[RMDB]
An RNA of 207 nucleotides, treated with 2A3 and read out base by base. The RNA was probed in 150 mM KOAc, 10 mM MgCl2 and 150 mM bicine (pH 8.5) at 24 C. Values cover nucleotides 27 to 156.

RNA sequence: GGGAACGACUCGAGUAGAGUCGAAAAAGGCAGUAACAGCCGCCAAAAUUACUGUCACUGAAUAAUAUUGCAAUGUCAACAUCGCCGUCGCAAGACCAUCAACAAGAAAAGCAGCAAGCAACAUUGGAAUUGUGCGAAUGGACACCGCAUAAUCACAACGUACGAGUAGGUUCGCCUACUCGUACGUAAAAGAAACAACAACAACAAC
Reactivity to 2A3 in 0.01 (KOAc 150mM, MgCl2 10mM, bicine 150mM(pH8.5), 24C), signal-to-noise 1, nucleotides 027 to 156: a000g010g010c000a000g010u000a070a080c050a090g000c030c000g160c000c000a040a170a000a000u000u020a000c020u010g010u010c040a010c170u150g110a100a080u120a110a020u040a090u300u140g030c120a050a040u040g050u150c060a030a050c030a140u020c030g010c020c000g000u000c000g010c010a000a190g010a010c020c000a020u200c020a000a130c000a080a050g090a060a060a000a000g030c000a010g000c020a000a120g020c000a000a020c010a050u000u020g080g020a060a020u000u000g000u010g000c010g000a000a060u080g000g000a000c000a000c010c010g020c020a030u010a000a040u100c010a000c020a080